[RMDB]
RNA sequence: GGGAACGACUCGAGUAGAGUCGAAAAGAUAUGGAGUGUCUUCUCUUGGAUUUAUACAAGUAUAUCGGAAACGAUAUACGAUUGUCAGAGAAGUCACUCCUAAGUCAAAGAGUGCUUCGGCACUCAAGUUAAGUAACUUCUUCGGAAGUUACUUAACAAAAGAAACAACAACAACAAC
Reactivity to 2A3 in 0.01 (KOAc 150mM, MgCl2 10mM, bicine 150mM(pH8.5), 24C), signal-to-noise 4, nucleotides 027 to 126: g010a010u030a020u090g000g000a000g010u010g000u000c010u020u010c010u020c040u090u230g300g020a260u240u300u200a240u220a120c020a030a070g000u000a000u000a000u020c000g010g000a050a010a010c000g000a010u010a000u000a010c030g010a020u030u050g050u060c130a030g000a000g000a010a000g000u010c000a000c000u000c010c000u010a000a010g000u000c010a040a090a090g010a000g000u020g000c010u080u120c300g130g000c010a000c000u010c000a000a000
Reactivity to DMS in 0.01 (KOAc 150mM, MgCl2 10mM, bicine 150mM(pH8.5), 24C), signal-to-noise 5, nucleotides 027 to 126: g010a030u000a300u010g000g010a020g030u000g010u000c000u000u000c000u000c000u000u000g030g010a140u010u010u000a070u010a080c110a060a130g010u000a000u000a000u000c000g000g000a090a060a130c000g010a010u000a000u000a010c000g010a090u000u000g010u000c140a080g000a010g000a020a010g000u000c000a000c000u000c000c000u000a010a050g000u000c030a120a110a120g000a020g010u000g000c000u000u010c220g020g020c010a000c000u000c000a020a060